[RMDB]
RNA sequence: GGGAACGACUCGAGUAGAGUCGAAAAAUGAAGCAUUUAAAAUGAGUAUUGCUUCAGUGCCAGCUCCACGCUAUCUAACUGACAUGACUCUUGAAGAAAUGUCAAGAGAUUGGUUAAUGCUCAUUCACGCACUAUGAGUCUUCGGACUCAUAGUGCGAAAAGAAACAACAACAACAAC
Reactivity to DMS in 0.01 (KOAc 150mM, MgCl2 10mM, bicine 150mM(pH8.5), 24C), signal-to-noise 1, nucleotides 027 to 126: a100u000g010a020a000g020c020a110u000u010u000a080a040a110a050u020g000a080g030u000a030u010u000g000c000u000u000c010a130g040u010g000c060c040a090g000c040u020c030c040a060c250g010c140u000a020u000c030u030a060a100c140u000g020a020c030a000u000g010a290c010u000c080u030u000g010a110a000g010a080a200a030u010g020u010c000a000a040g000a060g000a040u010u000g030g010u000u010a040a040u010g000c020u000c000a030u000u000c130a200
Reactivity to 2A3 in 0.01 (KOAc 150mM, MgCl2 10mM, bicine 150mM(pH8.5), 24C), signal-to-noise 1, nucleotides 027 to 126: a000u030g010a000a000g000c020a000u000u000u300a120a150a060a060u060g040a000g070u040a040u060u180g000c000u000u080c010a010g050u040g080c010c020a010g010c000u000c010c010a100c060g020c030u010a010u110c000u000a010a050c000u010g000a020c000a030u010g030a020c000u040c050u140u110g090a010a010g040a030a090a040u060g000u000c000a000a010g020a000g020a020u030u070g060g000u020u130a060a020u100g040c010u020c040a020u090u050c060a010
An RNA of 177 nucleotides, treated with DMS and 2A3 and read out base by base. The RNA was probed in 150 mM KOAc, 10 mM MgCl2 and 150 mM bicine (pH 8.5) at 24 C. For DMS the reverse transcriptase was MarathonRT. Source: RMDB library OK2TST, as collected in RNAgym. For 2A3, 815 sequencing reads were counted. For 2A3 the reverse transcriptase was SuperScript II with manganese.